The record gives the reactivity of an RNA of 177 nucleotides to 2A3 and DMS. The RNA was probed in 150 mM KOAc, 10 mM MgCl2 and 150 mM bicine (pH 8.5) at 24 C. It was measured as part of the RMDB library M2PK50.
RNA sequence: GGGAACGACUCGAGUAGAGUCGAAAAGUAUCCAUGUUCGCAUGGAUACGAAAUAUGCGCGCGUAUAUCCGGUUGGCUGGAUGCGCGCGUCUGGCUGGGCGGUGGUGCUAGUCUUCGGACUAGCAAAUCCCACUAGGUGAUUCGUCACCUAGUGGGAAAAAGAAACAACAACAACAAC
Reactivity to 2A3 in 0.01 (KOAc 150mM, MgCl2 10mM, bicine 150mM(pH8.5), 24C), signal-to-noise 1, nucleotides 027 to 126: g000u000a000u030c020c010a000u010g000u040u110c220g000c150a010u010g000g000a000u000a000c000g010a010a020a000u220a040u090g040c030g000c000g010c000g000u030a080u010a050u240c030c000g050g050u170u240g300g120c060u040g060g000a030u030g000c000g000c000g000c000g000u000c010u030g040g020c020u020g010g020g030c020g000g090u070g040g000u050g010c010u000a000g000u030c000u000u030c170g070g000a000c000u010a000g010c010a010a000a020
Reactivity to DMS in 0.01 (KOAc 150mM, MgCl2 10mM, bicine 150mM(pH8.5), 24C), signal-to-noise 2, nucleotides 027 to 126: g000u000a000u010c000c000a000u000g000u000u000c220g030c010a010u010g010g010a020u000a000c000g020a030a050a080u000a070u000g010c020g010c000g010c000g030u010a060u010a170u000c010c010g010g030u010u000g030g020c050u010g020g010a010u000g000c000g010c010g000c000g010u000c070u000g010g000c040u000g000g000g000c060g000g030u000g000g000u000g010c000u000a000g000u000c000u000u000c190g010g000a010c000u010a010g000c010a020a050a100